This 177-nucleotide RNA was probed chemically with 2A3 and DMS.

RNA sequence: GGGAACGACUCGAGUAGAGUCGAAAAGAUAUGGACGAUAUCAGGGAGAUGGUGGUCGGAAACGACCAUACCAUCGAGGAUCUGAGAUCGUCCUAAGUCAAAGUAGACAGGGUUCGCCCUGUCUACACAACUUGAUGAUGUUCGCAUCAUCAAGUUGAAAAGAAACAACAACAACAAC
Reactivity to 2A3 in 0.01 (KOAc 150mM, MgCl2 10mM, bicine 150mM(pH8.5), 24C), signal-to-noise 4, nucleotides 027 to 126: g030a020u060a030u160g000g000a000c010g000a000u010a010u070c010a010g040g010g040a180g010a020u010g000g020u000g020g000u010c010g010g010a040a060a020c010g010a000c000c020a020u130a050c000c000a000u010c010g000a060g020g020a060u020c010u010g010a010g020a050u030c000g000u000c000c000u000a030a000g000u000c040a090a050a110g000u010a010g010a000c000a000g060g020g030u090u180c250g230c010c000c000u000g010u000c000u010a000c000a000
Reactivity to DMS in 0.01 (KOAc 150mM, MgCl2 10mM, bicine 150mM(pH8.5), 24C), signal-to-noise 6, nucleotides 027 to 126: g000a040u010a300u010g000g000a010c010g000a020u000a060u000c000a010g000g010g000a070g010a010u000g010g030u000g000g010u000c010g020g000a090a070a210c010g020a020c010c000a060u010a040c080c000a000u000c000g000a080g020g010a060u000c010u000g000a020g010a010u000c010g000u000c010c000u000a010a070g010u000c050a130a130a150g020u000a010g000a010c000a020g000g010g010u000u010c300g010c000c000c000u000g000u000c000u000a000c010a190
Annotation
The reactions ran in a buffer of 150 mM KOAc, 10 mM MgCl2 and 150 mM bicine (pH 8.5), at 24 C. The DMS profile rests on 10,669 reads.